RNA sequence: GGGAACGACUCGAGUAGAGUCGAAAAGAUAUGGAGAACUUCCAACAGCCUGUCAGUCGGAAACGACUGCAGGACAUGGAAGGCUCCUAAGUCAAAACGAUGAAGCAAGUUCGCUUGCUUCAUCGAACUCCCUAUAGCGGUUCGCCGCUAUAGGGAGAAAAGAAACAACAACAACAAC
Reactivity to 2A3 in 0.01 (KOAc 150mM, MgCl2 10mM, bicine 150mM(pH8.5), 24C), signal-to-noise 2, nucleotides 027 to 126: g000a010u030a030u090g010g010a030g000a300a280c020u020u010c010c010a160a110c140a270g120c010c000u080g280u300c050a010g000u000c020g000g000a050a030a020c010g000a000c000u010g000c000a000g030g000a020c010a020u050g000g000a010a000g010g010c010u000c000c000u000a050a020g040u030c050a000a010a080a220c010g000a000u000g000a000a000g020c010a010a000g010u040u150c160g160c190u000u000g020c000u000u000c000a000u000c000g010a010a020
Reactivity to DMS in 0.01 (KOAc 150mM, MgCl2 10mM, bicine 150mM(pH8.5), 24C), signal-to-noise 1, nucleotides 027 to 126: g010a020u000a270u000g010g000a000g020a060a130c000u000u020c000c000a000a070c300a210g000c000c000u000g040u000c020a010g070u010c050g000g020a110a040a160c000g030a020c000u000g000c000a010g000g000a040c100a070u000g000g010a010a000g000g000c010u000c010c000u000a000a160g000u010c020a140a060a090a180c020g010a010u000g010a030a010g000c000a000a000g000u000u030c180g000c000u000u000g000c000u000u020c000a000u020c000g000a030a090
An RNA of 177 nucleotides, treated with 2A3 and DMS and read out base by base. The DMS profile rests on 1,055 reads. The RNA was probed in 150 mM KOAc, 10 mM MgCl2 and 150 mM bicine (pH 8.5) at 24 C.